[RMDB]
RNA sequence: GGGAACGACUCGAGUAGAGUCGAAAAUGAGUGGAACCUUUAUCCUUUAUUGGGGAGUACACUCGAGGAGUGGAAGGCGGGGAGGCCGGGGUUCCGGGCUUACCUACGGGAACUGCUGGUUGCCCCUGAUAUCAUAGAACUUCGGUUCUAUGAUAUCAAAAGAAACAACAACAACAAC
Reactivity to DMS in 0.01 (KOAc 150mM, MgCl2 10mM, bicine 150mM(pH8.5), 24C), signal-to-noise 2, nucleotides 027 to 126: u010g000a030g000u000g020g000a110a100c150c050u010u000u010a120u000c060c060u000u010u010a110u050u010g000g000g000g010a080g010u010a200c040a020c010u000c030g010a100g000g010a100g020u010g020g000a090a090g010g020c120g010g000g000g000a100g000g010c000c030g040g000g000g010u010u010c030c020g030g000g000c150u010u000a050c190c090u000a080c060g020g010g000a050a020c030u000g020c010u010g000g020u010u020g000c000c000c000c030u020
Reactivity to 2A3 in 0.01 (KOAc 150mM, MgCl2 10mM, bicine 150mM(pH8.5), 24C), signal-to-noise 2, nucleotides 027 to 126: u080g000a000g040u020g030g040a070a080c030c010u080u100u100a180u220c040c000u180u190u130a180u250u160g000g000g000g010a030g040u020a020c000a000c000u000c030g010a080g000g000a120g030u140g040g080a150a100g050g100c140g000g000g010g000a020g050g000c080c060g000g000g000g000u040u070c060c060g000g050g000c000u090u070a070c020c060u040a040c040g060g000g020a030a000c010u200g180c000u010g110g040u020u040g000c000c000c000c000u020